[RMDB]
RNA sequence: GGGAACGACUCGAGUAGAGUCGAAAAAAAAGAGAGAAGUACAGGUAAUUUGUUUUUGUUUUGAAACAAAGAGAACAUUGGUUACUGGGGCUUAUUUCAGGAGUCGAAGUCAGUUCUUUAGUGGAGAUAGUGUGUCAGGUAAGUGUUCUUUUGCAUCCUAGUACAAAAGGUUCGCCUUUUGUACUAGAAAAGAAACAACAACAACAAC
Reactivity to DMS in 0.01 (KOAc 150mM, MgCl2 10mM, bicine 150mM(pH8.5), 24C), signal-to-noise 2, nucleotides 027 to 156: a040a030a000a100g000a160g020a060g000a060a050g020u000a040c050a110g050g040u010a070a080u000u000u000g000u000u000u010u000u000g020u000u010u010u010g010a130a080a060c060a030a020a050g010a100g030a050a060c030a050u010u000g020g010u000u010a050c040u000g010g010g020g040c040u000u000a030u000u000u010c040a090g020g010a070g030u010c040g020a040a040g020u010c010a100g020u000u000c020u010u000u030a120g040u010g010g000a120g010a060u010a060g010u010g040u000g000u010c030a070g030g000u000a080a080g040u000g010u010u010c060u010u000u010u010g020c040a300u010c040
Reactivity to 2A3 in 0.01 (KOAc 150mM, MgCl2 10mM, bicine 150mM(pH8.5), 24C), signal-to-noise 4, nucleotides 027 to 156: a000a000a000a000g080a010g000a000g000a110a010g030u100a040c040a040g020g050u080a070a090u060u040u040g000u030u000u000u020u030g050u030u090u060u160g070a090a070a010c030a020a050a010g060a010g010a030a010c020a030u060u080g040g010u080u070a040c030u030g000g000g000g040c020u040u050a040u040u150u060c030a030g020g090a020g050u060c040g040a030a010g020u010c020a010g030u050u100c000u050u110u100a070g020u040g030g010a030g000a030u040a110g060u100g000u010g050u050c040a020g020g040u060a080a050g000u010g010u060u030c010u010u050u040u070g040c000a030u130c040